[RMDB]
RNA sequence: GGGAACGACUCGAGUAGAGUCGAAAAGUUGGGCGCGAUGGCGCGUCCCAGCGGCAUAUCGUCGUCCAAUAGCCUGGCCAGCCGGUUGGCGCGGGCAAUCGUGUCAUCGAUUCCCAGCAUGUUGGCCUAAGCCAUACCCUUUCGAGGGUAUGGCUUAAAAAGAAACAACAACAACAAC
Reactivity to DMS in 0.01 (KOAc 150mM, MgCl2 10mM, bicine 150mM(pH8.5), 24C), signal-to-noise 2, nucleotides 027 to 126: g010u000u000g000g010g000c030g030c010g010a020u000g000g020c020g000c000g000u000c090c050c060a170g010c010g020g000c040a060u010a070u000c030g000u010c020g010u000c000c000a030a020u000a130g010c040c020u000g020g000c020c010a240g010c010c080g000g030u000u000g000g020c030g010c060g020g000g010c300a040a010u010c000g010u000g010u000c090a040u000c010g000a100u000u000c020c000c000a150g000c120a060u020g010u000u000g010g000c020c010
Reactivity to 2A3 in 0.01 (KOAc 150mM, MgCl2 10mM, bicine 150mM(pH8.5), 24C), signal-to-noise 1, nucleotides 027 to 126: g020u010u020g000g000g020c040g000c020g020a050u040g000g100c000g000c010g070u090c020c000c020a010g000c030g090g000c000a060u120a040u070c040g180u020c020g030u000c010c000a000a000u040a050g020c010c030u050g020g010c010c000a010g010c020c020g100g080u110u160g080g000c050g020c070g020g030g060c040a010a020u070c000g050u040g150u130c050a060u080c020g030a020u050u020c000c000c000a020g060c050a050u190g080u140u140g070g030c000c000